Description:
Chemical mapping of a 177-nucleotide RNA with DMS and 2A3. The DMS profile rests on 1,988 reads. The reactions ran in a buffer of 150 mM KOAc, 10 mM MgCl2 and 150 mM bicine (pH 8.5), at 24 C.
RNA sequence: GGGAACGACUCGAGUAGAGUCGAAAAAACUUCAUGAACUAUUGUCUAAUGCGGAGUUUCACCAUAGACAUUAAAACUGAUGAAAGUUUGAGGUUACGGCAAACUUUUCAAGUUUUUUAGUAGCUUCCCAACAGUGAUGAUUCGUCAUCACUGUUGGAAAAGAAACAACAACAACAAC
Reactivity to DMS in 0.01 (KOAc 150mM, MgCl2 10mM, bicine 150mM(pH8.5), 24C), signal-to-noise 3, nucleotides 027 to 126: a030a040c030u000u000c040a080u030g000a120a080c090u010a030u000u000g010u000c010u000a070a060u000g010c160g020g000a130g010u010u000u010c060a180c060c030a070u000a020g000a030c030a050u000u000a020a030a040a070c110u000g010a140u000g010a030a020a020g020u000u000u000g010a100g020g000u000u010a070c180g000g010c060a020a020a020c010u010u000u010u000c170a110a060g010u000u000u000u000u000u000a090g010u000a020g000c070u000u010c060
Reactivity to 2A3 in 0.01 (KOAc 150mM, MgCl2 10mM, bicine 150mM(pH8.5), 24C), signal-to-noise 2, nucleotides 027 to 126: a000a000c100u140u070c100a150u110g060a100a010c030u040a050u110u090g000u000c000u020a200a110u130g090c050g050g080a090g020u090u060u100c060a030c020c010a000u020a010g030a000c000a000u030u030a040a030a030a040c040u060g070a050u090g010a170a040a020g000u010u020u030g010a010g040g030u130u120a020c040g030g010c020a010a010a000c000u090u100u040u060c020a010a040g000u000u000u010u010u010u020a020g010u020a010g020c030u040u000c020
Values cover nucleotides 27 to 126.
DMS adducts were read by reverse transcription with MarathonRT.